An RNA of 177 nucleotides, treated with DMS and 2A3 and read out base by base. 2A3 adducts were read by reverse transcription with SuperScript II with manganese.

RNA sequence: GGGAACGACUCGAGUAGAGUCGAAAAGGAUCUGGCGGAAAAUGAGGAUUACGAUACGACCGUCAUCGAGAUAGGGGAUCAGACCCCGAUAUCCUCUCAGGAGUUAGGCAUGGAACUAGACCUGUUGCGAGUCGGAUAAUUUCGAUUAUCCGACUCGAAAAGAAACAACAACAACAAC
Reactivity to DMS in 0.01 (KOAc 150mM, MgCl2 10mM, bicine 150mM(pH8.5), 24C), signal-to-noise 3, nucleotides 027 to 126: g030g000a040u010c050u010g040g010c080g000g010a040a040a080a060u010g000a100g000g000a090u020u060a090c050g020a080u000a060c050g040a260c140c070g010u040c080a050u020c010g030a140g000a150u000a090g000g020g030g000a030u010c300a200g020a170c000c000c030c000g000a100u000a040u000c000c000u000c010u010c060a070g000g010a190g020u000u030a020g020g000c050a060u000g000g000a060a050c040u000a000g000a050c000c010u000g000u010u030g030
Reactivity to 2A3 in 0.01 (KOAc 150mM, MgCl2 10mM, bicine 150mM(pH8.5), 24C), signal-to-noise 4, nucleotides 027 to 126: g130g000a090u100c020u140g030g000c030g060g030a120a050a070a140u250g010a050g090g050a020u070u120a070c050g020a040u080a140c050g060a040c040c030g050u030c040a010u040c030g040a060g050a160u110a080g000g010g010g000a030u150c070a070g140a300c000c000c000c000g020a000u000a000u040c000c000u020c000u050c060a040g030g050a140g080u040u080a000g080g000c090a070u170g070g060a040a020c000u000a030g020a100c020c040u040g020u060u040g020
Reactivities are given for positions 27 through 126. The DMS profile rests on 3,457 reads.